The record gives the reactivity of an RNA of 207 nucleotides to 2A3. The reactions ran in a buffer of 150 mM KOAc, 10 mM MgCl2 and 150 mM bicine (pH 8.5), at 24 C. It was measured as part of the RMDB library OK3TST. For 2A3, 307 sequencing reads were counted.
RNA sequence: GGGAACGACUCGAGUAGAGUCGAAAAGGCGCGCGUGUGCGUGGCUUGUAAAUUGUAGGCUAGAGCAAUUGACCGAUAAGACUUUUUAUACGCACAACACAUCUAAUUAUAAUAACUGAUAACAUCUAGUUACAAAAUGUGCGUAUUCAAAUAUUGAGCCCUCCGCUGCGUUCGCGCAGCGGAGGGCAAAAGAAACAACAACAACAAC
Reactivity to 2A3 in 0.01 (KOAc 150mM, MgCl2 10mM, bicine 150mM(pH8.5), 24C), signal-to-noise 1, nucleotides 027 to 156: g020g020c020g020c080g000c060g100u110g110u130g160c030g030u000g070g000c000u000u050g000u000a100a150a150u000u060g000u030a060g030g020c150u050a050g030a000g050c000a100a000u020u110g000a010c090c060g050a010u050a030a080g020a020c000u010u000u000u140u000a070u010a010c080g060c000a000c000a060a060c030a060c000a070u050c090u060a300a020u060u150a050u020a300a000u060a030a010c030u110g070a000u090a120a140c000a000u100c060u180a020g080u040u090a060c140a030a180a000a060u060g000u020g000c000g000u000a050u000u000c060a000a050a050u270a200u220u170g020a030